Annotation
This 177-nucleotide RNA was probed chemically with DMS. Values are in units of 0.01, from 0 to 300, in steps of 10. The data come from the RNA Mapping Database (RMDB), library OK2TST. The DMS profile rests on 666 reads.

RNA sequence: GGGAACGACUCGAGUAGAGUCGAAAAAGGAUUUUCUACGCCUAAAAAUCCAAAAGAGGCUUUUAAUACAGGGGUCAUUGCAUCCAUAUGUUGGAAAUCACCUGAACGUAAAUCAGCACCACGGGUGCACCGCCCUAGUUUUCGAACUAGGGCGGUGAAAAGAAACAACAACAACAAC
Reactivity to DMS in 0.01 (KOAc 150mM, MgCl2 10mM, bicine 150mM(pH8.5), 24C), signal-to-noise 1, nucleotides 027 to 126: a230g010g010a070u000u000u000u000c100u040a130c120g020c010c010u000a050a140a090a060a100u020c000c040a040a030a110a080g000a160g000g010c010u000u020u000u010a100a190u010a070c070a030g010g030g000g020u000c110a070u010u000g000c120a080u010c000c010a080u000a060u000g010u000u000g010g000a040a090a090u000c020a040c060c030u010g000a040a060c160g010u000a020a040a060u000c080a050g010c030a050c030c010a090c150g050g010g020u000g000